An RNA of 177 nucleotides, treated with 2A3 and DMS and read out base by base. Conditions: 150 mM KOAc, 10 mM MgCl2 and 150 mM bicine (pH 8.5), 24 C.

[RMDB]
RNA sequence: GGGAACGACUCGAGUAGAGUCGAAAACUCCACCUUGGAGUGCCCUAUUCGGAGCACUGCAGUUCCCGAUAGAAAGGCUAAGCACCUCGCAAUGACGUAAGGUGGGACUUUUCCCUACAGUUCGAGCGGAACUAAUGAAGUUCGCUUCAUUAGUUCCAAAAGAAACAACAACAACAAC
Reactivity to 2A3 in 0.01 (KOAc 150mM, MgCl2 10mM, bicine 150mM(pH8.5), 24C), signal-to-noise 2, nucleotides 027 to 126: c010u040c000c010a020c010c060u070u080g040g090a040g050u040g000c000c000c020u040a140u090u110c070g000g040a080g050c050a030c090u170g060c060a080g010u030u020c040c020c000g000a010u020a060g130a030a100a000g040g000c040u040a080a010g070c020a060c040c010u000c030g020c060a090a230u170g050a090c030g070u060a050a000g000g000u000g020g010g000a000c000u060u040u000u000c000c000c000u080a120c070a090g030u040u040c020g080a020g010c050
Reactivity to DMS in 0.01 (KOAc 150mM, MgCl2 10mM, bicine 150mM(pH8.5), 24C), signal-to-noise 3, nucleotides 027 to 126: c130u010c000c020a070c070c040u010u000g000g000a050g010u000g000c010c050c000u000a140u010u020c240g010g020a080g000c010a060c060u000g020c100a090g000u000u000c020c000c000g050a060u010a090g000a110a100a050g020g040c040u020a130a100g040c110a110c060c040u000c060g020c090a110a100u000g020a110c130g020u010a080a030g000g020u000g000g010g010a080c130u000u000u020u000c000c020c000u010a090c200a120g000u000u000c060g000a120g000c300

About this RNA: High 2A3 reactivity points to a flexible backbone, as in loops and unpaired stretches. For 2A3, 2,208 sequencing reads were counted.